Chemical mapping of a 177-nucleotide RNA with DMS and 2A3. It was measured as part of the RMDB library OK2TRN. Conditions: 150 mM KOAc, 10 mM MgCl2 and 150 mM bicine (pH 8.5), 24 C. For DMS, 5,357 sequencing reads were counted.
RNA sequence: GGGAACGACUCGAGUAGAGUCGAAAAUGCUGCGGGCAACGCGGUGCGCCCCGAACAGACGCUGUGUGCCACGGUGCAAUGGUCGCAUGCUCUGUUGAGUGGACCUGAGCGUGCGUUGUUGCACCGGCACCUCAUCCGCGUUCGCGCGGAUGAGGUGAAAAGAAACAACAACAACAAC
Reactivity to DMS in 0.01 (KOAc 150mM, MgCl2 10mM, bicine 150mM(pH8.5), 24C), signal-to-noise 3, nucleotides 027 to 126: u000g010c040u010g010c070g000g000g010c080a070a060c050g010c030g030g000u000g010c090g000c070c010c010c060g010a090a080c180a100g010a090c090g010c060u010g030u000g000u000g000c020c040a200c060g010g010u000g000c010a020a020u000g010g000u010c000g000c010a010u010g010c000u000c000u000g000u000u000g000a110g030u010g010g000a080c100c080u010g000a030g010c000g010u000g010c000g000u010u020g020u000u010g000c000a020c010c000g000g000
Reactivity to 2A3 in 0.01 (KOAc 150mM, MgCl2 10mM, bicine 150mM(pH8.5), 24C), signal-to-noise 3, nucleotides 027 to 126: u170g000c050u040g010c040g060g020g000c070a160a040c040g010c010g060g040u090g010c040g050c020c010c000c020g060a100a020c040a060g110a070c030g050c090u040g030u030g040u060g180c020c010a080c070g020g000u010g000c010a000a010u030g040g040u300c000g000c010a000u010g010c000u000c000u000g060u040u100g090a140g090u230g070g040a050c020c080u010g010a010g000c020g000u010g000c000g010u010u030g010u000u000g010c000a000c000c010g010g000